[RMDB]
RNA sequence: GGGAACGACUCGAGUAGAGUCGAAAAGAUAUGGAUGAUUCUUUUGACGACCGCAUAUUCGGAAACGAAUAUGGGUCGAUAAGAAUAUCCUAAGUCAAAGCUAUACCGUCUUCGGACGGUAUAGCAACCAGGUUUAAAAGUUCGCUUUUAAACCUGGAAAAGAAACAACAACAACAAC
Reactivity to DMS in 0.01 (KOAc 150mM, MgCl2 10mM, bicine 150mM(pH8.5), 24C), signal-to-noise 3, nucleotides 027 to 126: g000a050u000a270u010g010g000a010u000g010a000u000u000c000u000u010u010u000g010a240c150g010a010c000c000g030c020a000u000a000u000u000c000g010g010a150a090a180c010g000a020a010u000a000u000g020g000g010u010c000g010a050u000a010a010g010a000a020u000a030u000c000c010u020a050a130g020u000c030a110a120a090g000c000u000a000u000a000c000c000g010u000c010u000u010c140g010g020a000c010g010g010u000a000u000a000g010c000a010a020
Reactivity to 2A3 in 0.01 (KOAc 150mM, MgCl2 10mM, bicine 150mM(pH8.5), 24C), signal-to-noise 3, nucleotides 027 to 126: g020a030u070a030u160g000g000a000u110g040a020u150u030c040u020u170u090u150g300a240c080g030a010c000c020g110c300a000u000a000u000u000c000g020g050a060a060a040c010g020a000a000u010a000u010g000g000g000u010c000g000a000u010a000a000g000a010a010u000a000u000c000c010u000a140a010g030u050c060a140a060a000g000c000u010a000u000a010c010c010g010u000c010u070u100c230g060g010a000c000g020g000u010a000u000a000g000c000a000a000